[RMDB]
RNA sequence: GGGAACGACUCGAGUAGAGUCGAAAAUUUUAGUACAAGCGAGUACACGCAGUAUACUGCCACUUGUGUGAGAAUACUUUUAGUACAGGGGAGUACACGCAGUAUACUGCCACUUGUGUGAGAAUACCCUUUGGUUAGCGUUCGCGCUAACCAAAGGAAAAGAAACAACAACAACAAC
Reactivity to 2A3 in 0.01 (KOAc 150mM, MgCl2 10mM, bicine 150mM(pH8.5), 24C), signal-to-noise 2, nucleotides 027 to 126: u000u020u070u040a010g010u080a010c010a070a000g060c010g150a010g090u110a040c030a000c140g020c000a000g000u000a020u000a000c010u000g040c040c000a060c050u100u010g040u010g000u050g120a150g120a080a110u210a150c030u000u000u060u110a080g060u090a090c030a050g050g000g000g020a000g100u110a010c020a030c090g000c000a020g010u020a000u000a000c000u000g000c000c000a000c000u000u000g000u000g000u000g040a080g030a010a070u040a090c000
Reactivity to DMS in 0.01 (KOAc 150mM, MgCl2 10mM, bicine 150mM(pH8.5), 24C), signal-to-noise 1, nucleotides 027 to 126: u000u000u000u020a070g010u000a000c000a000a150g010c030g000a260g000u030a060c300a290c300g000c000a020g000u020a010u000a010c000u000g000c000c250a130c120u000u000g070u070g000u020g030a250g000a090a150u000a050c080u000u010u000u000a240g010u000a010c190a030g000g000g060g000a010g000u090a010c070a110c300g000c000a030g050u000a030u000a000c000u000g000c000c020a000c000u000u000g020u000g000u020g000a030g000a000a110u000a200c000
Source: RMDB library OK1LIB, as collected in RNAgym. Chemical mapping of a 177-nucleotide RNA with 2A3 and DMS. The 2A3 profile rests on 1,177 reads. For DMS, 924 sequencing reads were counted. Values cover nucleotides 27 to 126.